[RMDB]
RNA sequence: GGGAACGACUCGAGUAGAGUCGAAAACUCGUACUACGGUACGAGAGCUAUGGCUUCGGCCAUAGCACGAGGCAUCUACGGAUGCCUCGACCGUCAGGCUUCGGCCUGACGGACUUGCGCUUCGGCGCAAGACUCUAGCUACGGCUAGAGAACCUAUGCUUCGGCAUAGGAAGCCUAGCUUCGGCUAGGCAGCUAGGCUACGGCCUAGCACCGGUCCGUUCGCGGACCGGAUGGUGCUUGUUAUUUCACCUAAAUCGAAAUAACGUACGCUGCGCUUCGGCGCAGCGAAAAGAAACAACAACAACAAC
Reactivity to 2A3 in 0.01 (KOAc 150mM, MgCl2 10mM, bicine 150mM(pH8.5), 24C), signal-to-noise 3, nucleotides 027 to 266: c000u000c000g000u000a010c000u020a020c190g130g010u010a000c010g000a000g010a000g020c010u000a000u000g000g000c000u060u100c300g110g000c010c000a000u000a000g000c000a010c030g000a000g000g010c010a000u000c000u020a050c250g150g000a000u000g010c010c000u000c000g000a050c000c010g000u010c000a000g000g000c020u040u220c280g110g000c010c000u010g000a000c000g000g000a000c000u000u030g010c010g010c000u060u090c290g090g000c000g000c000a010a000g020a000c010u000c000u020a000g000c000u030a060c230g170g000c000u000a000g000a000g010a020a010c000c000u000a000u000g000c000u020u090c220g120g000c000a000u000a010g020g010a020a010g000c000c000u000a010g010c000u050u040c180g130g010c000u000a000g000g010c000a000g000c000u000a000g010g000c000u030a040c300g100g010c000c010u000a000g010c000a010c010c000g000g010u000c000c000g020u010u090c220g020c010g110g000a000c000c000g000g000a000u050g010g000u020g000c020u010u020g020u000u000a000u000u010u010c040a050c020c070u170a090a020a020u060c060g020a070a000a000u020a000a010c000g010u010a040
Chemical mapping of a 307-nucleotide RNA with 2A3. Reactivities are given for positions 27 through 266.